[RMDB]
RNA sequence: GGGAACGACUCGAGUAGAGUCGAAAAAAAACUUAGUGAAUAUGCGAAACAUAUGUACAGUGAAUACUCAGGUAUGCAUGCAAUAUCACACUUAAAACUCUCUGUUCCUUGCCUGAAUUUUGACUCUGGACCCCAUCUUGUUAGAUUGGUGGGAAUACGAUGCAUUUACUUUCGAGUAAAUGCAUCGAAAAGAAACAACAACAACAAC
Reactivity to DMS in 0.01 (KOAc 150mM, MgCl2 10mM, bicine 150mM(pH8.5), 24C), signal-to-noise 1, nucleotides 027 to 156: a050a020a010a130c080u050u000a130g060u010g010a130a030u000a050u000g000c020g000a140a070a280c010a000u000a010u010g030u020a100c080a060g070u010g020a070a140u010a090c060u010c040a090g000g000u000a030u000g010c010a170u010g010c030a080a000u010a020u010c040a070c000a080c030u010u000a040a060a060a060c030u000c010u000c040u000g060u000u000c000c000u000u000g010c000c010u000g010a070a090u000u010u000u010g030a080c010u000c030u000g010g010a080c000c000c000c020a060u010c030u000u000g000u010u000a080g010a170u000u030g020g010u030g020g010g000a110a080u000a120
Reactivity to 2A3 in 0.01 (KOAc 150mM, MgCl2 10mM, bicine 150mM(pH8.5), 24C), signal-to-noise 3, nucleotides 027 to 156: a030a000a020a000c090u120u080a060g000u010g040a040a020u060a020u100g010c070g060a140a090a010c040a000u140a020u110g060u090a060c020a040g040u040g130a120a030u100a130c050u000c050a040g000g090u020a020u070g020c050a030u060g010c020a050a040u020a030u200c040a020c010a030c050u020u060a050a060a050a070c020u080c000u010c040u030g020u000u050c020c000u010u030g040c010c000u080g050a200a180u050u090u080u160g010a040c030u000c030u100g000g110a080c000c010c000c030a000u000c010u070u100g080u060u020a080g040a210u040u160g010g000u020g020g020g040a020a000u130a070